[RMDB]
RNA sequence: GGGAACGACUCGAGUAGAGUCGAAAAGGAAACGCUAUCGCGACGAUAAAUCUCAGAGAGUGAGAGACAACGAAGAAAGCGAUAGCGGAAGACGUCGACUCGUCUCUCACUCUUGAGGAGACGAAAAGGGUAAAUCUUACUUCGGUAAGAUUUACCCAAAAGAAACAACAACAACAAC
Reactivity to 2A3 in 0.01 (KOAc 150mM, MgCl2 10mM, bicine 150mM(pH8.5), 24C), signal-to-noise 3, nucleotides 027 to 126: g110g000a020a150a010c000g010c000u000a010u000c000g000c030g050a050c000g000a020u110a240a180a130u130c000u000c070a030g050a020g010a010g200u030g000a010g000a000g000a000c060a230a010c220g140a090a100g030a150a110a000g010c020g000a000u010a000g000c000g000g000a000a000g010a000c020g070u050c050g010a010c040u010c080g000u000c000u000c000u020c000a010c000u060c000u010u010g010a030g060g000a020g010a010c080g060a080a030a080a090
Reactivity to DMS in 0.01 (KOAc 150mM, MgCl2 10mM, bicine 150mM(pH8.5), 24C), signal-to-noise 1, nucleotides 027 to 126: g000g000a000a080a080c000g010c000u040a000u000c000g000c000g000a300c220g040a130u090a170a090a110u020c000u020c000a120g010a000g050a010g000u010g000a020g010a020g000a140c010a030a160c030g010a150a110g020a150a020a060g000c000g000a000u000a000g040c030g030g000a020a130g010a080c040g000u010c080g010a160c000u030c000g000u040c000u000c020u010c000a030c010u000c000u000u070g000a020g000g010a110g000a020c010g000a030a140a090a130
Structure probing data (2A3 and DMS) for a 177-nucleotide construct. As a SHAPE reagent, 2A3 marks flexible, mostly unpaired nucleotides at the ribose 2'-OH. The data come from the RNA Mapping Database (RMDB), library OK1LIB. 2A3 adducts were read by reverse transcription with SuperScript II with manganese. For 2A3, 1,824 sequencing reads were counted. For DMS the reverse transcriptase was MarathonRT.